[RMDB]
RNA sequence: GGGAACGACUCGAGUAGAGUCGAAAAGGUGAAAGCGAAUCGGGGAAGAUAAGCUAGCAGCAAAAAGGAACCGAUUCCCACCAAGUUCGGAAAGAGAUACCGGGCGAGGCGCUGGAGAAAGAAUCUCAAACUCCCGCAAGUUUCGACUUGCGGGAAAGCUUCUUUUAAACUUCGGUUUAAAAGAAGCAAAAGAAACAACAACAACAAC
Reactivity to 2A3 in 0.01 (KOAc 150mM, MgCl2 10mM, bicine 150mM(pH8.5), 24C), signal-to-noise 2, nucleotides 027 to 156: g020g000u050g050a220a010a000g030c050g000a030a000u030c020g000g010g020g040a040a050g050a190u110a100a040g020c030u070a030g060c090a010g000c010a110a070a040a020a050g150g020a020a010c000c000g010a040u000u020c000c020c000a010c010c000a040a030g020u030u010c000g020g030a140a130a060g040a020g000a010u030a060c010c020g000g000g000c030g020a030g020g000c020g020c070u070g030g020a040g070a050a100a030g060a060a060u020c020u020c050a080a050a030c040u010c010c000c000g000c000a010a010g000u030u060u090c020g060a020c010u020u010g000c020g010g000g000a000a000a030
Structure probing data (2A3) for a 207-nucleotide construct. Values are in units of 0.01, from 0 to 300, in steps of 10. Conditions: 150 mM KOAc, 10 mM MgCl2 and 150 mM bicine (pH 8.5), 24 C.